[RMDB]
RNA sequence: GGGAACGACUCGAGUAGAGUCGAAAAGAAAACAAGUACCGAGAACAUUGUUUUCGCUGCUUGGCGUUGCCGUUUUGUGUUGCAGUUGGUUGGGUAACGCCGCAAAUACCAACGGCACAGACAGAUACACCUAUAGGUAGUUCGCUACCUAUAGGUGAAAAGAAACAACAACAACAAC
Reactivity to DMS in 0.01 (KOAc 150mM, MgCl2 10mM, bicine 150mM(pH8.5), 24C), signal-to-noise 5, nucleotides 027 to 126: g020a060a020a190a170c040a010a010g000u000a030c270c040g010a050g030a020a030c020a170u030u050g010u000u000u000u000c000g000c180u000g010c000u000u000g000g010c080g000u000u010g000c030c040g000u010u030u030u000g010u020g000u010u020g030c030a060g000u020u000g000g010u000u010g000g000g000u010a060a100c300g030c010c020g000c140a060a040a090u040a050c000c030a000a020c000g000g000c010a020c100a090g000a090c130a090g010a150u030a110
Reactivity to 2A3 in 0.01 (KOAc 150mM, MgCl2 10mM, bicine 150mM(pH8.5), 24C), signal-to-noise 8, nucleotides 027 to 126: g030a000a020a000a010c010a000a020g020u020a040c040c060g020a030g020a030a030c110a300u170u300g010u010u000u000u000c000g000c010u020g000c000u020u050g010g010c020g010u010u040g040c020c020g000u020u030u160u110g140u050g040u050u170g050c090a090g010u010u020g050g000u060u120g100g000g020u030a040a040c040g020c020c000g010c030a060a090a010u240a030c000c000a000a000c000g010g000c010a010c000a020g110a010c050a020g060a040u090a160